[RMDB]
RNA sequence: GGGAACGACUCGAGUAGAGUCGAAAACCUUACGUUCGCGUAAGGAAAAACCGUAGGAUGCAGGGAGACGACCGUGUGCGUUGAUCUUCGAAAGAGGGGAGCACAUCGUCGUCGAAGAACUGCAUCCUAAACGGAAAAAGCAGCGUUCGCGCUGCAAUACAGUACUAAUCUUCGGAUUAGUACUGUAAAAAGAAACAACAACAACAAC
Reactivity to DMS in 0.01 (KOAc 150mM, MgCl2 10mM, bicine 150mM(pH8.5), 24C), signal-to-noise 2, nucleotides 027 to 156: c030c000u000u010a000c000g020u010u030c300g050c040g050u000a010a000g040g030a010a070a090a070a110c010c000g020u000a060g030g000a050u000g020c000a020g000g030g030a300g010a060c000g010a020c000c050g070u000g040u000g020c020g010u000u000g020a080u010c000u010u010c020g000a100a100a300g000a030g000g000g030g010a110g010c010a010c000a000u000c300g010u000c000g030u000c000g000a050a100g000a070a230c000u000g010c010a050u000c000c000u000a000a030a080c010g000g010a050a080a000a100a120g020c000a020g010c000g000u000u010c070g040c050g000c000u000g000c010a000a050
Reactivity to 2A3 in 0.01 (KOAc 150mM, MgCl2 10mM, bicine 150mM(pH8.5), 24C), signal-to-noise 2, nucleotides 027 to 156: c000c000u000u010a010c010g030u030u060c300g000c020g090u010a010a010g020g000a080a040a040a000a020c010c000g010u000a010g000g000a000u000g020c010a000g000g000g020a040g000a010c000g000a010c020c050g000u000g000u000g000c020g180u230u020g000a010u000c010u010u000c010g050a050a040a030g000a010g020g010g000g000a020g000c000a000c000a010u020c020g010u010c000g000u000c000g020a000a000g010a010a000c000u000g000c010a000u000c000c000u000a000a000a000c000g010g040a120a020a000a080a010g000c000a000g000c000g060u090u190c200g000c010g020c120u000g000c000a000a000